[RMDB]
RNA sequence: GGGAACGACUCGAGUAGAGUCGAAAAGAUAUGGAUCAUCCGGCUCUCCAUCGGCUGCGAUAAGACCCGGUCGGAAACGACCGAGGUCUUUUGACGCAGGAAGUGGAGAGCCGGAUGAUCCUAAGUCCAUACGGUCUAUGUUCGCAUAGACCGUAUGAAAAGAAACAACAACAACAAC
Reactivity to DMS in 0.01 (KOAc 150mM, MgCl2 10mM, bicine 150mM(pH8.5), 24C), signal-to-noise 1, nucleotides 027 to 126: g010a160u010a270u000g000g030a040u000c000a000u000c020c000g050g020c000u000c000u000c000c000a000u000c300g000g040c010u000g010c010g000a140u010a000a000g000a020c000c000c000g010g010u010c000g000g000a120a150a250c010g020a010c000c000g000a050g050g000u000c000u000u000u000u000g020a180c110g000c000a040g010g030a170a210g000u000g000g030a040g010a020g000c000c010g020g000a010u000g000a000u000c000c000u000a040a050g000u000c030

Source information: This 177-nucleotide RNA was probed chemically with DMS. The RNA was probed in 150 mM KOAc, 10 mM MgCl2 and 150 mM bicine (pH 8.5) at 24 C. Reactivities are given for positions 27 through 126. For DMS, 1,459 sequencing reads were counted.